[RMDB]
RNA sequence: GGGAACGACUCGAGUAGAGUCGAAAACGAGUAGUCGCGGUUGGGACUGAGGUGCCUACAACGUGUUUUUGAGUGGGCCUGUGUCUCUGUGUGCGCCGUGUGCGGAUAGCUUGCUAUGCGUGUGUGGGCAACAUCAAUAGUUCGCUAUUGAUGUUGCAAAAGAAACAACAACAACAAC
Reactivity to 2A3 in 0.01 (KOAc 150mM, MgCl2 10mM, bicine 150mM(pH8.5), 24C), signal-to-noise 2, nucleotides 027 to 126: c030g000a040g090u130a020g040u090c030g000c040g130g000u190u040g050g030g040a010c010u070g140a060g220g040u200g080c010c000u030a020c020a130a040c070g100u130g120u080u090u060u080u200g110a080g010u020g000g000g010c000c010u090g030u000g010u030c010u010c010u030g100u030g020u050g060c040g010c000c010g010u040g040u050g000c000g030g020a020u010a030g000c000u010u080g000c020u020a020u060g070c030g020u050g010u010g020u040g010g120
Reactivity to DMS in 0.01 (KOAc 150mM, MgCl2 10mM, bicine 150mM(pH8.5), 24C), signal-to-noise 2, nucleotides 027 to 126: c040g000a130g020u000a050g030u010c030g020c030g010g000u000u010g000g010g000a050c040u010g000a090g000g030u000g020c010c000u000a070c030a070a130c240g000u010g000u000u000u000u000u000g010a300g000u010g010g010g010c020c020u000g010u010g000u000c010u010c010u010g020u010g020u010g020c110g030c010c030g000u000g020u000g020c020g000g000a080u000a050g020c030u010u000g010c030u000a060u000g000c030g000u000g020u020g010u000g010g020